Structure probing data (2A3 and DMS) for a 177-nucleotide construct. The DMS profile rests on 4,019 reads. Conditions: 150 mM KOAc, 10 mM MgCl2 and 150 mM bicine (pH 8.5), 24 C.
[RMDB]
RNA sequence: GGGAACGACUCGAGUAGAGUCGAAAACGUCAGAGGACGAAGUCGGUCCAUCUGCGGUAAGAGACCGACAUAGAGUUCGAAGCAGAACGAACAACCGCAGAUACACGAUUGGAGUGUGAAUGAGAGAAAUGCUCCUAGGAUUCGUCCUAGGAGCAUUAAAAGAAACAACAACAACAAC
Reactivity to 2A3 in 0.01 (KOAc 150mM, MgCl2 10mM, bicine 150mM(pH8.5), 24C), signal-to-noise 3, nucleotides 027 to 126: c010g010u030c030a070g040a060g290g070a080c070g050a110a020g000u010c000g000g000u000c000c000a050u000c000u000g000c000g000g000u040a070a030g040a000g000a020c000c000g010a020c000a010u120a000g100a000g010u020u030c030g040a170a000g240c070a030g040a040a050c010g000a010a010c000a010a000c000c030g000c020a000g000a000u050a010c050a000c020g150a090u090u260g210g030a200g010u090g000u030g080a100a160u100g000a110g010a020g000a100
Reactivity to DMS in 0.01 (KOAc 150mM, MgCl2 10mM, bicine 150mM(pH8.5), 24C), signal-to-noise 3, nucleotides 027 to 126: c060g000u040c020a120g010a280g030g010a020c000g010a180a120g020u000c010g010g030u000c020c060a030u000c000u000g000c020g010g010u010a080a150g020a090g000a030c000c020g010a020c020a060u000a030g040a180g010u020u000c010g000a040a060g050c300a200g000a090a060c010g000a000a040c020a090a100c000c000g020c000a000g000a010u000a070c090a040c080g000a100u000u010g000g020a190g020u020g000u010g020a080a050u010g010a140g000a080g010a030
Notes
Values cover nucleotides 27 to 126. 2A3 adducts were read by reverse transcription with SuperScript II with manganese.